The data come from the RNA Mapping Database (RMDB), library TTRINS. An RNA of 177 nucleotides, treated with DMS and read out base by base. The reactions ran in a buffer of 150 mM KOAc, 10 mM MgCl2 and 150 mM bicine (pH 8.5), at 24 C. The DMS profile rests on 1,133 reads.

[RMDB]
RNA sequence: GGGAACGACUCGAGUAGAGUCGAAAAGAUAUGGACCUGAACUACAAGCCGACGUUCGUUGAAACUCCCUGAUAAUCGGAAACGAUUAUCAGGGAGUGGAGAACCAAGGCUUGCAGGUCCUAAGUCACAUUAAGUUUCCGUUCGCGGAAACUUAAUGAAAAGAAACAACAACAACAAC
Reactivity to DMS in 0.01 (KOAc 150mM, MgCl2 10mM, bicine 150mM(pH8.5), 24C), signal-to-noise 2, nucleotides 027 to 126: g020a070u000a300u000g020g010a000c000c010u020g000a080a130c130u000a300c010a020a010g020c000c000g010a300c300g000u020u000c010g030u020u000g000a290a120a020c000u000c000c000c000u010g000a010u000a000a010u040c010g000g010a130a040a230c030g000a030u000u000a000u000c010a020g000g000g000a000g010u010g010g000a050g010a010a020c020c050a110a300g010g000c000u000u000g000c000a000g020g000u000c000c000u000a000a020g010u000c010a230